Source: RMDB library 15KREP, as collected in RNAgym. Chemical mapping of a 177-nucleotide RNA with DMS and 2A3. The reactions ran in a buffer of 150 mM KOAc, 10 mM MgCl2 and 150 mM bicine (pH 8.5), at 24 C. For DMS the reverse transcriptase was MarathonRT.

RNA sequence: GGGAACGACUCGAGUAGAGUCGAAAAUAAGGGCGGUGAUUCAACUGACUUCAUAGCCCUCAUUAUGGCUUAUGGCAAUUGCACAUUUGGUGCUCCAGAUGAUGCCUCUCGGUUACUUCAUACCGUGCUAGAUACAAGGCUUCGGCCUUGUAUCUAGAAAAGAAACAACAACAACAAC
Reactivity to DMS in 0.01 (KOAc 150mM, MgCl2 10mM, bicine 150mM(pH8.5), 24C), signal-to-noise 2, nucleotides 027 to 126: u010a110a000g010g010g000c010g000g090u000g000a030u000u000c040a270a170c160u030g000a060c130u000u000c010a040u020a190g030c000c000c020u000c090a030u000u000a060u000g020g000c020u000u000a110u000g000g000c300a050a110u000u000g040c050a060c020a070u020u000u020g020g020u000g000c140u000c010c010a010g010a070u010g000a070u000g010c000c050u010c040u000c020g020g010u000u000a060c150u000u000c100a140u000a160c030c070g000u020g030
Reactivity to 2A3 in 0.01 (KOAc 150mM, MgCl2 10mM, bicine 150mM(pH8.5), 24C), signal-to-noise 2, nucleotides 027 to 126: u050a030a020g030g010g010c030g030g030u030g010a050u010u020c030a150a170c120u250g010a020c020u020u020c030a020u000a030g000c020c040c020u000c000a010u020u130a060u130g040g010c010u060u080a020u100g050g000c060a120a290u140u180g000c010a020c020a100u080u070u170g200g000u070g030c050u000c030c000a020g000a050u090g010a050u080g070c000c000u000c000u000c020g010g000u060u020a070c030u100u080c020a050u030a120c020c000g000u000g030